[RMDB]
RNA sequence: GGGAACGACUCGAGUAGAGUCGAAAAGCACUAUUUUCUACAAGGAGUUCGACUGGAGCGCGCUAGCCUUGUGCGGUGCCGCAUCUUUCUUGUAGUUUUUUUUUACGGCAAUUAGAAAGAAAUGGACGCUAUGCACCAUGUUCGCAUGGUGCAUAGCAAAAGAAACAACAACAACAAC
Reactivity to 2A3 in 0.01 (KOAc 150mM, MgCl2 10mM, bicine 150mM(pH8.5), 24C), signal-to-noise 2, nucleotides 027 to 126: g090c060a010c130u090a130u080u150u000u000c000u000a000c010a000a040g010g010a060g050u000u170c080g100a150c180u200g200g000a060g050c050g050c000g000c020u050a090g000c000c010u190u270g080u160g000c080g000g020u040g040c080c000g000c040a040u000c060u000u050u000c020u000u000g040u050a000g010u050u000u000u000u000u000u000u000u200a010c040g080g000c040a100a000u040u060a040g160a240a090a000g180a060a110a070u180g000g080a010c080